[RMDB]
RNA sequence: GGGAACGACUCGAGUAGAGUCGAAAAGAUCCCCUCAAGAGGAAAGAUUUAUUCUUUCAACGAGGGCAACUCACCCGACUGGGAAGAGGGACUCCAGAAGUAUGUGGACGAUGUGAAGAAGGGACAGUCCACCUCUAUUCUUCGGAAUAGAGGUGGAAAAAGAAACAACAACAACAAC
Reactivity to 2A3 in 0.01 (KOAc 150mM, MgCl2 10mM, bicine 150mM(pH8.5), 24C), signal-to-noise 1, nucleotides 027 to 126: g030a090u080c000c000c000c000u010c010a140a240g070a050g060g240a010a030a040g000a030u110u160u140a150u300u080c010u000u040u000c010a000a000c070g000a000g020g000g040c020a060a060c010u020c040a060c000c000c030g100a090c060u120g000g010g050a060a120g020a100g020g000g000a020c060u030c030c040a060g050a070a020g110u110a020u230g060u050g000g010a050c030g010a070u050g060u130g050a060a000g010a010a040g010g000g040a000c060a050g020
Reactivity to DMS in 0.01 (KOAc 150mM, MgCl2 10mM, bicine 150mM(pH8.5), 24C), signal-to-noise 3, nucleotides 027 to 126: g000a170u010c250c010c000c020u010c030a110a120g020a210g010g010a010a010a010g000a000u000u030u000a070u030u000c000u000u000u000c010a070a200c190g000a030g000g000g000c080a050a050c050u000c060a160c040c030c020g020a110c120u000g000g000g000a040a090g000a100g000g000g000a060c070u000c010c020a040g020a090a120g010u010a030u010g000u000g010g020a030c090g000a080u010g000u000g020a030a040g010a070a060g010g010g010a090c200a110g010